[RMDB]
RNA sequence: GGGAACGACUCGAGUAGAGUCGAAAAUGUGCUGCGGUGGGACGUCAAGGUCAGUUCGUAUGCUGCGGGAAAUGGCCGCCGAGGAGGUAGGGCUUACGCUUGCGUUUGUCUGUUAUAUCUUGGUGGACGAAGUGCAGAGGUUCGCCUCUGCACUUCGAAAAGAAACAACAACAACAAC
Reactivity to DMS in 0.01 (KOAc 150mM, MgCl2 10mM, bicine 150mM(pH8.5), 24C), signal-to-noise 2, nucleotides 027 to 126: u020g040u000g000c040u000g000c110g010g030u000g000g050g010a030c030g030u000c100a110a080g000g000u000c060a140g020u010u000c110g000u000a040u010g020c030u000g030c010g000g000g000a070a070a060u010g000g000c010c010g000c030c000g010a070g020g010a130g000g030u010a050g010g030g020c020u000u000a010c020g000c050u000u000g020c000g010u000u010u030g030u010c020u000g010u040u020a060u020a100u000c030u000u000g000g020u000g000g000a220
Reactivity to 2A3 in 0.01 (KOAc 150mM, MgCl2 10mM, bicine 150mM(pH8.5), 24C), signal-to-noise 2, nucleotides 027 to 126: u110g000u050g020c070u030g060c030g090g010u040g030g050g020a040c020g030u060c040a020a030g160g040u090c030a080g020u000u020c010g000u050a090u130g030c000u010g030c000g000g040g070a000a110a120u160g080g040c000c000g020c000c000g030a100g050g010a070g100g000u130a060g040g000g000c000u010u040a030c000g010c000u070u020g000c010g010u010u020u010g060u000c000u070g200u180u070a160u020a020u040c000u000u010g000g060u020g020g040a060